This 177-nucleotide RNA was probed chemically with DMS and 2A3.
[RMDB]
RNA sequence: GGGAACGACUCGAGUAGAGUCGAAAAUCUAACUCAUUCGUGAGUUAGAGUGAGCGCACCGACCAUUGGGCCGGUGGCGCGCUGUCGGUGCCGCGCGUGGCGAUAGUGCUUGCUUCGGCAAGCACAAACCGUUAAGCUUUUUCGAAAGCUUAACGGUAAAAGAAACAACAACAACAAC
Reactivity to DMS in 0.01 (KOAc 150mM, MgCl2 10mM, bicine 150mM(pH8.5), 24C), signal-to-noise 5, nucleotides 027 to 126: u000c000u000a010a000c000u000c000a040u000u010c190g020u000g000a020g000u000u000a000g000a020g010u010g000a120g020c020g020c010a040c010c000g000a020c010c090a300u000u010g020g020g040c010c010g000g030u010g010g020c020g000c010g010c070u010g010u010c050g010g020u010g010c020c040g010c100g010c080g020u010g000g010c050g000a090u010a090g010u000g000c000u000u000g000c010u000u010c180g030g000c000a010a000g010c000a000c000a020a060
Reactivity to 2A3 in 0.01 (KOAc 150mM, MgCl2 10mM, bicine 150mM(pH8.5), 24C), signal-to-noise 3, nucleotides 027 to 126: u000c010u000a000a000c010u000c000a040u090u050c190g110u040g020a000g000u010u000a000g000a010g010u110g120a040g000c030g000c010a010c000c010g000a000c000c040a140u070u280g130g050g000c050c020g070g050u120g050g060c050g000c010g000c030u050g050u060c030g050g090u090g030c060c020g030c020g000c040g040u080g040g030c040g030a070u100a120g010u000g000c000u000u000g000c000u010u020c130g080g000c010a000a000g000c000a000c000a000a000
Conditions: 150 mM KOAc, 10 mM MgCl2 and 150 mM bicine (pH 8.5), 24 C. The 2A3 profile rests on 5,042 reads. In probing experiments dimethyl sulfate is read out at A N1 and C N3, which are open when not base-paired. 2A3 adducts were read by reverse transcription with SuperScript II with manganese.